[RMDB]
RNA sequence: GGGAACGACUCGAGUAGAGUCGAAAAAUUUCAAUGUUUUUGGUAUCCAGCUGGAGCAGCGUUUGCUUCAUCCUAUCCUCCAGCUCUAGGCUGCUAAGAACAUGAUUGUUAAGCACACGCAGUUCCACGAGCUGAGUGAGUUCGCUCACUCAGCUCGAAAAGAAACAACAACAACAAC
Reactivity to DMS in 0.01 (KOAc 150mM, MgCl2 10mM, bicine 150mM(pH8.5), 24C), signal-to-noise 1, nucleotides 027 to 126: a090u030u000u020c030a070a060u000g000u000u000u000u000u000g000g000u010a020u000c000c010a140g000c020u000g000g050a020g090c260a040g000c120g030u000u000u000g000c060u000u000c080a080u000c060c050u010a100u010c220c000u000c020c000a010g010c010u000c280u020a090g000g000c030u000g000c030u000a000a010g000a000a020c010a000u000g000a040u000u000g000u010u000a050a100g000c070a030c100a180c160g010c120a150g000u000u000c000c010a270
Reactivity to 2A3 in 0.01 (KOAc 150mM, MgCl2 10mM, bicine 150mM(pH8.5), 24C), signal-to-noise 1, nucleotides 027 to 126: a000u090u100u020c100a130a150u070g000u000u010u000u000u060g030g000u030a000u060c010c040a020g060c030u000g010g040a000g000c010a020g070c060g080u190u250u150g050c020u150u170c040a080u090c010c000u030a040u080c000c000u020c000c000a010g000c010u000c000u030a020g000g010c000u020g000c000u030a010a000g000a020a000c010a010u050g020a040u020u010g090u120u120a070a030g000c020a100c010a030c190g010c060a030g020u000u000c000c010a030